Chemical mapping of a 177-nucleotide RNA with 2A3 and DMS.
It was measured as part of the RMDB library M2PK50.
The reactions ran in a buffer of 150 mM KOAc, 10 mM MgCl2 and 150 mM bicine (pH 8.5), at 24 C.
Values cover nucleotides 27 to 126.
For DMS the reverse transcriptase was MarathonRT.
RNA sequence: GGGAACGACUCGAGUAGAGUCGAAAACACCCCGCGUUCGCGCGGGGUGAAACAGGUAGUUGCUAUCUCAAUUACCUGAACAGGGCAUGGUCUGGAUAGCAAAAACUGAUGACUUCGGUCAUCAGAAGUUUUUAGAGAAGUUCGCUUCUCUAAAAACAAAAGAAACAACAACAACAAC
Reactivity to 2A3 in 0.01 (KOAc 150mM, MgCl2 10mM, bicine 150mM(pH8.5), 24C), signal-to-noise 2, nucleotides 027 to 126: c000a000c020c000c000c010g010c000g010u020u060c210g010c010g000c010g110g050g000g020u010g000a030a020a000c010a020g030g050u040a030g060u020u030g000c060u100a090u150c030u030c120a040a110u050u020a020c000c000u010g000a050a040c080a080g000g020g050c040a080u110g010g050u100c070u050g080g040a040u040a020g030c020a020a020a040a000a060c010u010g020a000u000g000a010c020u010u060c280g050g000u000c000a010u010c010a000g010a010a010
Reactivity to DMS in 0.01 (KOAc 150mM, MgCl2 10mM, bicine 150mM(pH8.5), 24C), signal-to-noise 2, nucleotides 027 to 126: c010a010c000c010c000c010g020c000g050u000u020c180g040c030g030c000g010g000g000g020u000g010a010a050a100c050a030g010g000u000a010g030u000u010g000c150u010a040u010c100u000c030a030a040u000u000a020c000c010u000g010a080a050c120a100g010g000g030c020a030u010g000g010u000c130u010g000g010a050u000a040g000c090a060a020a080a100a140c000u000g000a010u000g000a010c000u000u010c200g010g000u000c000a000u000c000a000g010a040a090